[RMDB]
Structure probing data (DMS and 2A3) for a 170-nucleotide construct. The data come from the RNA Mapping Database (RMDB), library 15KLIB. Conditions: 150 mM KOAc, 10 mM MgCl2 and 150 mM bicine (pH 8.5), 24 C. For DMS the reverse transcriptase was MarathonRT. The DMS profile rests on 98,006 reads.
RNA sequence: GGGAACGACUCGAGUAGAGUCGAAAAGCCAGGGGUUUUCAUCCUCAAGUUUCUUGAUCUUCUUGUUGAUUCGCCGGAGCUCCUUCUCGGCUAUUCGCUUUUUCUUCCUUUCCUCUACCCACUGCUCAUGCAUAUGCCUUCGGGCAUAUGAAAAGAAACAACAACAACAAC
Reactivity to DMS in 0.01 (KOAc 150mM, MgCl2 10mM, bicine 150mM(pH8.5), 24C), signal-to-noise 9, nucleotides 027 to 129: g000c030c030a100g020g010g010g010u020u020u020u040c070a080u050c020c000u000c080a110a090g020u000u010u010c030u000u020g020a090u030c040u030u010c040u040u010g020u020u020g030a060u010u020c050g000c040c040g010g010a060g000c030u030c060c020u020u020c040u010c080g040g050c090u000a030u040u010c080g030c000u010u010u010u010u020c040u020u020c070c020u010u010u010c020c000u020c020u040a050c010c000c010a120c110u030g030c030u020c060a100u010g030
Reactivity to 2A3 in 0.01 (KOAc 150mM, MgCl2 10mM, bicine 150mM(pH8.5), 24C), signal-to-noise 9, nucleotides 027 to 129: g060c020c020a030g020g010g000g020u040u040u050u160c060a070u070c010c010u030c030a030a030g030u030u040u020c030u040u070g080a100u020c000u090u000c010u050u100g060u060u070g060a100u070u030c030g010c040c000g030g020a020g020c010u030c010c000u090u040c070u030c000g010g010c020u030a070u030u060c030g030c010u050u060u020u040u020c010u030u030c010c000u020u020u020c000c000u010c010u040a080c010c000c010a060c050u070g030c020u050c050a080u160g030